[RMDB]
The data come from the RNA Mapping Database (RMDB), library OK2TST.
The record gives the reactivity of an RNA of 177 nucleotides to 2A3 and DMS.
For DMS, 3,645 sequencing reads were counted.
For 2A3 the reverse transcriptase was SuperScript II with manganese.
Reactivities are given for positions 27 through 126.
Conditions: 150 mM KOAc, 10 mM MgCl2 and 150 mM bicine (pH 8.5), 24 C.
High 2A3 reactivity points to a flexible backbone, as in loops and unpaired stretches.
RNA sequence: GGGAACGACUCGAGUAGAGUCGAAAACAACAGGAUUCUGCAGUUCAUCACUUACUUGUUGGUGCCGGCCGGCCUGCUGACCAUCUACACCCAGUUGUUCACCACACACGUGGGAUGGCGGGAAUCCCCAUGAUCCUCAAUUCGUUGAGGAUCAUGGAAAAGAAACAACAACAACAAC
Reactivity to 2A3 in 0.01 (KOAc 150mM, MgCl2 10mM, bicine 150mM(pH8.5), 24C), signal-to-noise 3, nucleotides 027 to 126: c020a010a020c010a040g020g000a040u060u000c010u130g040c030a080g050u140u170c010a030u030c030a050c240u070u300a030c020u060u090g020u060u030g090g010u020g010c000c000g050g010c020c030g040g000c020c030u040g010c010u040g010a090c020c000a060u060c050u090a040c030a060c040c030c010a040g030u080u060g060u050u080c040a060c050c010a020c010a010c010a010c110g010u040g000g030g000a020u020g010g000c010g000g030g020a010a010u030c000c000
Reactivity to DMS in 0.01 (KOAc 150mM, MgCl2 10mM, bicine 150mM(pH8.5), 24C), signal-to-noise 4, nucleotides 027 to 126: c050a110a080c140a130g000g000a050u000u000c030u000g000c010a110g010u010u010c050a030u010c030a080c060u010u010a060c040u010u000g010u010u000g000g000u000g000c300c060g000g010c020c010g010g000c050c010u000g010c050u000g010a110c080c050a070u010c030u000a090c110a110c050c040c030a080g000u010u000g010u000u000c040a070c030c020a050c140a040c110a050c190g010u010g000g010g000a020u000g010g010c030g010g000g010a090a070u010c010c010